[RMDB]
RNA sequence: GGGAACGACUCGAGUAGAGUCGAAAAUGCAUCGAUCCACUUUCCGAGUGUCUCUUCUCUCCCCUUCCGGGGUCUCCUCGAAUCGGGCUGGCUCAUCCUCGAUUGCGGGCGGCGGUCCUGAGAACUCUUAUCUUCCUGUUUAGAAGAGGAGUCUCCUACUCUAAAUUGUCUUCGGACAAUUUAGAGUAAAAGAAACAACAACAACAAC
Reactivity to 2A3 in 0.01 (KOAc 150mM, MgCl2 10mM, bicine 150mM(pH8.5), 24C), signal-to-noise 2, nucleotides 027 to 156: u140g010c040a070u040c060g040a070u120c060c020a110c020u070u080u000c030c080g090a060g050u090g030u080c020u040c000u140u060c030u020c010u030c010c010c040c050u100u000c020c030g000g000g000g000u010c070u030c000c000u010c020g030a060a080u100c010g000g010g000c030u070g170g020c010u040c020a150u140c020c000u020c010g100a110u000u280g100c040g020g020g020c010g040g000c020g010g020u040c000c070u050g000a010g010a060a030c030u030c000u000u130a110u080c030u080u050c000c060u090g050u300u220u170a000g000a040a000g000a000g020g000a000g000u010c000u000c020c010u020
An RNA of 207 nucleotides, treated with 2A3 and read out base by base. It was measured as part of the RMDB library VIROID. Reactivities are given for positions 27 through 156.